[RMDB]
This 207-nucleotide RNA was probed chemically with 2A3 and DMS.
For 2A3 the reverse transcriptase was SuperScript II with manganese.
Conditions: 150 mM KOAc, 10 mM MgCl2 and 150 mM bicine (pH 8.5), 24 C.
For 2A3, 951 sequencing reads were counted.
The data come from the RNA Mapping Database (RMDB), library OK3TST.
DMS adducts were read by reverse transcription with MarathonRT.
Values cover nucleotides 27 to 156.

RNA sequence: GGGAACGACUCGAGUAGAGUCGAAAAGCUUCUGGUCCGGUGUCUGAGGUGUUUACUCGUGAGACGGUGAACAAGGCGUUUGGUUUGGGGCUGCUAUGAGCCUGAUUGAGUUUUUGUCGGAGUUUUCUUUCCGUCGUGUGGUGCUGGGAACCAUGUACGAUUAAUAAUACUUCGGUAUUAUUAAUCGAAAAGAAACAACAACAACAAC
Reactivity to 2A3 in 0.01 (KOAc 150mM, MgCl2 10mM, bicine 150mM(pH8.5), 24C), signal-to-noise 2, nucleotides 027 to 156: g000c020u060u030c040u100g000g000u040c020c030g040g020u050g030u000c050u020g090a070g000g080u060g020u000u140u090a090c080u070c070g040u040g030a130g000a010c040g000g010u070g020a040a030c030a020a100g070g000c020g010u030u100u160g070g000u010u080u150g050g000g000g010c010u020g000c010u080a070u150g030a010g040c000c030u010g020a070u070u120g030a060g080u080u070u020u220u210g010u000c030g060g020a040g050u140u160u150u090c010u080u090u000c040c010g030u040c030g010u030g050u050g030g050u070g010c060u070g040g030g060a030a020c090c020a030u140g050u190a020
Reactivity to DMS in 0.01 (KOAc 150mM, MgCl2 10mM, bicine 150mM(pH8.5), 24C), signal-to-noise 1, nucleotides 027 to 156: g010c020u000u000c040u000g030g010u000c050c040g050g020u000g010u020c000u030g020a180g000g020u010g020u010u000u010a030c040u000c030g000u020g000a160g000a080c070g000g010u010g020a050a060c050a060a110g000g020c030g000u000u010u000g030g010u000u000u000g040g030g010g040c040u000g000c040u000a080u000g020a110g030c030c010u010g000a080u020u010g010a150g000u000u000u010u020u000g050u000c000g030g020a170g020u000u010u000u020c060u010u010u010c010c020g000u020c120g000u010g020u010g000g020u000g020c030u000g010g000g010a100a070c020c030a060u000g010u000a210